[RMDB]
RNA sequence: GGGAACGACUCGAGUAGAGUCGAAAAUCCUAAGUCGUCGUGACAUGCACAAGGGAAGGACAUGAACUGUCGGAAACGACAGUUCAACAGCCUUCUCUUGUGCAACAGCACGACGAUAUGGAAAAGACUUUGUCUAAGUUCGCUUAGACAAAGUCAACCAAAGCAAACUCUUCGGAGUUUGCUUUGGAAAAGAAACAACAACAACAAC
Reactivity to 2A3 in 0.01 (KOAc 150mM, MgCl2 10mM, bicine 150mM(pH8.5), 24C), signal-to-noise 1, nucleotides 027 to 156: u020c020c000u010a070a020g020u010c000g000u000c010g000u000g030a210c020a100u030g010c000a000c010a020a010g000g000g020a000a000g010g000a060c030a250u060g000a010a000c000u010g000u010c010g030g020a140a060a030c010g020a000c000a010g000u010u000c000a040a050c040a000g000c000c000u020u000c000u000c000u000u000g000u000g010c000a000a000c000a000g010c000a000c000g000a000c000g000a000u000a050u040g070g010a020a060a020a070g000a000c000u060u000u010g000u000c000u000a000a000g010u050u100c220g040c160u000u000a000g000a000c020a000a000a000g000u000c000a000a000
Reactivity to DMS in 0.01 (KOAc 150mM, MgCl2 10mM, bicine 150mM(pH8.5), 24C), signal-to-noise 1, nucleotides 027 to 156: u000c010c010u030a050a230g010u000c000g030u000c000g020u010g000a030c100a300u090g000c010a020c000a020a000g010g000g010a030a040g000g000a040c050a300u020g020a000a030c000u010g000u000c010g040g020a150a150a270c020g020a020c010a000g020u000u000c000a000a030c120a240g000c000c000u030u000c010u000c000u000u000g020u010g060c020a000a010c120a220g000c000a010c000g020a030c000g020a030u000a060u000g030g020a050a170a240a150g010a020c000u010u000u010g000u020c000u000a000a010g020u000u010c300g090c000u020u000a030g000a010c000a000a010a000g010u000c010a000a100
The record gives the reactivity of an RNA of 207 nucleotides to 2A3 and DMS. It was measured as part of the RMDB library RNAMAK. The RNA was probed in 150 mM KOAc, 10 mM MgCl2 and 150 mM bicine (pH 8.5) at 24 C. DMS adducts were read by reverse transcription with MarathonRT. Reactivities are rounded to 0.1 and cut off at 0 and 3. 2A3 adducts were read by reverse transcription with SuperScript II with manganese.